[RMDB]
RNA sequence: GGGAACGACUCGAGUAGAGUCGAAAACCCGUUGAGCGGACUCCGGCACAGGGAAACGAGCCGAGUGGCGCCGACCACUUAAAAACACCGGAAUCCACCCCGCUCAAGCAAGACGAAUCUACAAAAGGGUCAUCGGAGACUUCGGUCUCUGAUGACCAAAAGAAACAACAACAACAAC
Reactivity to 2A3 in 0.01 (KOAc 150mM, MgCl2 10mM, bicine 150mM(pH8.5), 24C), signal-to-noise 3, nucleotides 027 to 126: c000c000c000g030u020u030g000a000g010c010g000g050a020c040u040c130c020g030g040c100a050c040a140g110g020g080a020a230a070c120g020a030g050c000c020g010a020g030u050g010g020c030g060c000c010g300a300c000c000a060c080u250u290a110a010a040a010a000c100a000c020c020g030g030a030a030u130c040c030a030c020c000c000c000g000c000u010c000a000a020g020c000a020a030g030a040c110g050a080a110u180c050u180a120c180a050a130a000a060g110
Reactivity to DMS in 0.01 (KOAc 150mM, MgCl2 10mM, bicine 150mM(pH8.5), 24C), signal-to-noise 1, nucleotides 027 to 126: c000c040c000g000u000u000g000a060g000c020g000g090a150c130u010c040c040g000g000c000a140c040a080g010g000g000a100a090a060c190g000a270g000c040c040g000a040g000u010g000g010c010g000c130c070g000a090c000c010a020c000u000u040a050a060a020a090a060c270a020c020c030g030g000a080a190u050c070c120a210c140c160c050c000g000c080u000c000a100a010g000c160a050a110g000a170c040g000a040a060u040c030u000a030c080a050a030a130a080g000

Chemical mapping of a 177-nucleotide RNA with 2A3 and DMS.
The RNA was probed in 150 mM KOAc, 10 mM MgCl2 and 150 mM bicine (pH 8.5) at 24 C.
For DMS, 1,113 sequencing reads were counted.
Reactivities are given for positions 27 through 126.